[RMDB]
RNA sequence: GGGAACGACUCGAGUAGAGUCGAAAAUAAGCACCUCGUUAGGUGAGGCGGCUACACGAAUAUAGGCCACUGACCCCGAACGUCGAGAGACGCCCCGGGUCAGGACAGCUCUUCCCGGCUUAAGGGUAAAAUCACAACGUCUUCGGACGUUGUGAAAGGGCUAUUUGUGAUUCGUCACAAAUAGCCCAAAAGAAACAACAACAACAAC
Reactivity to 2A3 in 0.01 (KOAc 150mM, MgCl2 10mM, bicine 150mM(pH8.5), 24C), signal-to-noise 1, nucleotides 027 to 156: u210a000a060g020c000a010c010c020u000c080g060u100u300a100g060g120u120g060a000g000g020c050g030g000c000u030a030c040a000c050g100a210a010u290a090u100a080g090g050c030c020a050c010u000g010a010c010c020c020c000g050a120a010c020g000u000c000g010a020g060a060g000a210c000g000c000c000c160c050g000g000g000u000c000a000g000g000a000c000a030g000c000u000c020u000u040c040c010c000g000g020c030u090u210a010a060g010g000g080u150a080a090a000a020u000c000a000c000a000a010c000g020u000c000u040u080c160g010g000a000c000g000u000u000g000u000g000a000a000a000
Structure probing data (2A3) for a 207-nucleotide construct.
Source: RMDB library M2RFPK, as collected in RNAgym.
Reactivities are given for positions 27 through 156.
The 2A3 profile rests on 556 reads.
2A3 adducts were read by reverse transcription with SuperScript II with manganese.